Structure probing data (DMS and 2A3) for a 177-nucleotide construct. The 2A3 profile rests on 10,988 reads. The RNA was probed in 150 mM KOAc, 10 mM MgCl2 and 150 mM bicine (pH 8.5) at 24 C.
RNA sequence: GGGAACGACUCGAGUAGAGUCGAAAACCGUGCACUCUGGGACGAGCUUGAGAAACUGGGUCUGGUGCCAGAUAUGACGGCAUGCCGCGUAAUGUGUCAUGGAAAGACUUAUCGGUGCACGAUGGGCAAUAUAUUUGAAUUUCGAUUCAAAUAUAUUAAAAGAAACAACAACAACAAC
Reactivity to DMS in 0.01 (KOAc 150mM, MgCl2 10mM, bicine 150mM(pH8.5), 24C), signal-to-noise 3, nucleotides 027 to 126: c040c000g010u010g000c020a030c030u010c080u000g000g010g000a020c030g000a030g000c010u010u000g000a110g000a060a110a160c070u000g000g010g010u010c030u000g000g020u010g000c000c020a070g010a070u020a030u020g010a300c300g000g000c000a110u000g000c000c000g000c060g000u000a300a260u180g000u000g000u000c010a000u000g000g010a060a050a050g000a110c000u010u010a010u010c040g010g010u010g010c020a020c000g000a070u020g000g010g000c070
Reactivity to 2A3 in 0.01 (KOAc 150mM, MgCl2 10mM, bicine 150mM(pH8.5), 24C), signal-to-noise 4, nucleotides 027 to 126: c000c000g000u010g010c010a010c010u080c020u060g010g000g050a010c020g040a010g030c000u010u000g020a020g040a070a050a010c010u020g010g000g050u010c010u030g040g010u030g050c000c000a000g020a010u050a020u040g060a030c000g000g000c000a000u040g000c000c000g000c010g000u080a100a220u270g030u000g000u000c000a010u020g020g060a080a030a010g010a020c000u030u040a020u050c020g020g000u030g000c020a000c010g010a040u030g000g010g020c010
Source: RMDB library OK1LIB, as collected in RNAgym.